The record gives the reactivity of an RNA of 177 nucleotides to 2A3 and DMS. The RNA was probed in 150 mM KOAc, 10 mM MgCl2 and 150 mM bicine (pH 8.5) at 24 C. It was measured as part of the RMDB library OK1LIB. Reactivities are given for positions 27 through 126.
RNA sequence: GGGAACGACUCGAGUAGAGUCGAAAAGCACAUCAGCGAAACCGAGGGCAAGAUACACAAUGCGUGCCUACAAACCCAGAGGUUUCCGUCCACCAGGAAGAGCUGCAUCGCAUUGCUGUAGUUAGACGACUGACCACGGAUUCGUCCGUGGUCAGUCAAAAGAAACAACAACAACAAC
Reactivity to 2A3 in 0.01 (KOAc 150mM, MgCl2 10mM, bicine 150mM(pH8.5), 24C), signal-to-noise 2, nucleotides 027 to 126: g020c030a030c020a040u160c070a000g030c060g130a010a010a020c000c000g020a060g040g020g000c040a060a090g020a140u160a020c010a060c000a010a010u090g030c000g070u010g030c030c040u080a100c030a030a070a200c000c000c000a000g060a050g170g000u010u000u010c000c000g000u000c030c040a060c010c000a080g020g040a020a060g000a090g060c080u050g000c090a000u040c030g000c010a020u000u110g040c110u030g020u000a010g010u050u180a040g030a180c040
Reactivity to DMS in 0.01 (KOAc 150mM, MgCl2 10mM, bicine 150mM(pH8.5), 24C), signal-to-noise 1, nucleotides 027 to 126: g000c040a130c070a060u300c130a010g010c030g000a050a010a300c090c000g010a200g010g060g000c000a000a160g010a090u060a100c040a000c070a070a130u090g000c300g000u100g070c000c000u010a090c010a000a180a220c070c000c060a000g000a300g000g000u000u000u000c040c070g090u010c000c000a030c010c060a190g000g000a180a060g000a030g000c000u000g000c000a060u030c000g010c010a070u120u000g010c070u120g070u000a010g000u000u000a100g000a150c060